[RMDB]
RNA sequence: GGGAACGACUCGAGUAGAGUCGAAAAGAUAUGGAUGCCAUCAUUCUUUUGACGCAUAGUGCAGUCGGAAACGACUGCAGUGCGAUAAGAAUAUGGCAUCCUAAGUCAAAAUCACCCUUCGGGGUGAGCUAGGGUAAUGGUUCGCCAUUACCCUAGCAAAAGAAACAACAACAACAAC
Reactivity to DMS in 0.01 (KOAc 150mM, MgCl2 10mM, bicine 150mM(pH8.5), 24C), signal-to-noise 3, nucleotides 027 to 126: g000a020u000a300u000g000g000a000u010g030c000c010a030u010c220a010u000u010c000u000u000u000u030g030a250c090g000c010a010u010a140g010u010g010c010a010g020u000c010g000g000a100a120a230c010g030a030c000u030g000c000a050g000u000g000c000g010a150u000a020a000g010a000a010u000a010u000g000g000c000a000u000c000c000u000a020a080g010u000c030a120a080a100a260u000c010a010c000c010c000u000u000c180g000g030g010g000u000g020a000
Reactivity to 2A3 in 0.01 (KOAc 150mM, MgCl2 10mM, bicine 150mM(pH8.5), 24C), signal-to-noise 3, nucleotides 027 to 126: g030a000u070a030u170g010g010a010u000g030c010c000a020u130c070a000u040u020c010u080u160u090u230g300a180c040g020c010a030u090a120g300u130g070c010a010g010u010c000g010g050a100a090a080c020g000a010c000u040g010c010a010g000u000g000c000g020a030u050a090a010g000a000a000u010a000u020g000g000c000a000u000c000c000u010a010a000g000u000c000a020a010a010a290u070c000a010c040c000c000u000u060c300g020g000g000g010u000g010a020
Source information:
Conditions: 150 mM KOAc, 10 mM MgCl2 and 150 mM bicine (pH 8.5), 24 C. The record gives the reactivity of an RNA of 177 nucleotides to DMS and 2A3. Values cover nucleotides 27 to 126. For DMS, 3,563 sequencing reads were counted. Source: RMDB library TTRDES, as collected in RNAgym. For DMS the reverse transcriptase was MarathonRT.